[RMDB]
RNA sequence: GGGAACGACUCGAGUAGAGUCGAAAAUAAUCAGGAUAACAGCGUCGGUGUCCUCACCUGGGACAACGUCUGUGCCCUAAAGCAAUCCCCUGAUAACCCAGAUAAUUUGCCCGUUCUAUUGGCAGGGGAUCUAGCCGUUUUUCGAAACGGCUAGAUCAAAAGAAACAACAACAACAAC
Reactivity to 2A3 in 0.01 (KOAc 150mM, MgCl2 10mM, bicine 150mM(pH8.5), 24C), signal-to-noise 1, nucleotides 027 to 126: u210a020a090u090c040a000g000g000a020u090a300a070c020a030g030c020g090u090c050g170g190u090g000u000c010c000u030c070a270c100c110u260g010g000g010a010c000a010a010c040g040u000c010u000g050u040g000c030c010c000u080a220a060a000g030c050a000a070u010c030c000c000c000u040g000a020u010a140a080c040c000c000a050g000a060u210a080a090u130u080u220g050c040c000c020g110u140u000c040u090a050u100u080g060g000c040a000g030g010g000
Reactivity to DMS in 0.01 (KOAc 150mM, MgCl2 10mM, bicine 150mM(pH8.5), 24C), signal-to-noise 1, nucleotides 027 to 126: u010a080a140u000c010a000g070g000a110u010a150a080c000a050g020c300g010u020c090g080g010u000g020u020c010c010u000c300a110c300c210u000g010g000g000a010c000a030a000c060g000u000c000u000g000u000g010c110c000c040u010a070a010a110g030c130a040a160u010c060c080c010c000u000g010a070u010a040a160c100c000c000a110g010a060u000a060a090u010u010u010g000c000c020c160g000u010u000c100u000a140u010u000g010g010c000a030g000g000g000